Source: RMDB library OK2TST, as collected in RNAgym. This 177-nucleotide RNA was probed chemically with 2A3 and DMS. High 2A3 reactivity points to a flexible backbone, as in loops and unpaired stretches. DMS adducts were read by reverse transcription with MarathonRT. The reactions ran in a buffer of 150 mM KOAc, 10 mM MgCl2 and 150 mM bicine (pH 8.5), at 24 C. High DMS reactivity at an A or C suggests that its Watson-Crick edge is free. The DMS profile rests on 29,105 reads. Reactivities are rounded to 0.1 and cut off at 0 and 3.
[RMDB]
RNA sequence: GGGAACGACUCGAGUAGAGUCGAAAAGUUAUCGCGCGGCCAUGCCAGCCAGGACAUCACUGCGCCAUCACCGACGAUUUGCAUCAGAAUAUAGAUGGCAAUACACAGCACCAUGACACUCAGUGUCCUAUUAAAUGCAUUUCGAUGCAUUUAAUAGAAAAGAAACAACAACAACAAC
Reactivity to 2A3 in 0.01 (KOAc 150mM, MgCl2 10mM, bicine 150mM(pH8.5), 24C), signal-to-noise 9, nucleotides 027 to 126: g040u030u060a090u140c030g000c000g000c010g080g000c020c020a040u080g000c010c000a010g040c030c010a030g020g030a030c010a060u060c010a020c070u050g010c030g010c030c000a020u020c020a020c030c040g070a060c040g030a090u040u040u190g020c030a040u030c010a040g160a250a030u210a040u060a120g030a040u030g050g020c000a000a010u110a030c090a000c010a020g040c020a020c040c020a050u060g010a010c010a010c020u200c050a040g020u000g020u050c000
Reactivity to DMS in 0.01 (KOAc 150mM, MgCl2 10mM, bicine 150mM(pH8.5), 24C), signal-to-noise 9, nucleotides 027 to 126: g010u000u000a060u010c080g020c060g020c050g010g010c030c090a060u000g010c040c030a090g010c050c050a070g010g010a070c090a050u000c100a070c060u000g010c110g010c020c030a040u000c040a100c090c050g010a140c110g000a080u000u000u000g020c090a060u000c030a070g000a100a080u010a100u000a090g000a040u000g010g000c020a050a050u010a080c100a070c070a060g010c060a090c050c050a070u000g000a040c030a030c020u010c110a100g020u000g010u000c030